The record gives the reactivity of an RNA of 177 nucleotides to DMS and 2A3. High DMS reactivity at an A or C suggests that its Watson-Crick edge is free. The data come from the RNA Mapping Database (RMDB), library OK1LIB. DMS adducts were read by reverse transcription with MarathonRT.
RNA sequence: GGGAACGACUCGAGUAGAGUCGAAAAAUUUCAAAUUCAAUAUGUCGGUUAGCGAUCACGAUUCUGAAAUGGAUUUUGAAUCGUUGGGAGAACCUAUUGUUGGUUUUGCUCUGCCUAAUCCUAUGGACAUAAGUAGCGGAUUCGUCCGCUACUUAUGAAAAGAAACAACAACAACAAC
Reactivity to DMS in 0.01 (KOAc 150mM, MgCl2 10mM, bicine 150mM(pH8.5), 24C), signal-to-noise 5, nucleotides 027 to 126: a090u030u020u010c040a030a040a040u030u010c040a020a020u000a020u010g000u010c190g000g030u000u010a040g000c060g030a250u040c020a020c010g000a010u000u000c010u020g000a050a060a110u020g010g010a130u010u000u010u000g000a020a010u000c020g010u030u020g010g000g000a210g000a070a020c020c010u010a080u010u010g000u010u000g010g000u000u000u010u000g000c160u010c040u010g010c030c030u000a050a080u010c050c020u020a090u020g010g010a300
Reactivity to 2A3 in 0.01 (KOAc 150mM, MgCl2 10mM, bicine 150mM(pH8.5), 24C), signal-to-noise 9, nucleotides 027 to 126: a000u120u140u090c040a030a020a040u090u040c050a030a040u070a070u150g090u060c030g010g010u040u070a070g080c010g020a020u050c000a000c030g000a000u020u010c030u090g070a080a110a120u300g140g080a180u040u040u030u060g050a060a040u020c010g020u070u070g040g020g000a060g020a010a010c000c000u030a060u030u120g040u040u040g030g020u010u010u020u050g050c020u050c030u070g050c000c020u060a070a060u040c020c000u070a100u150g030g040a010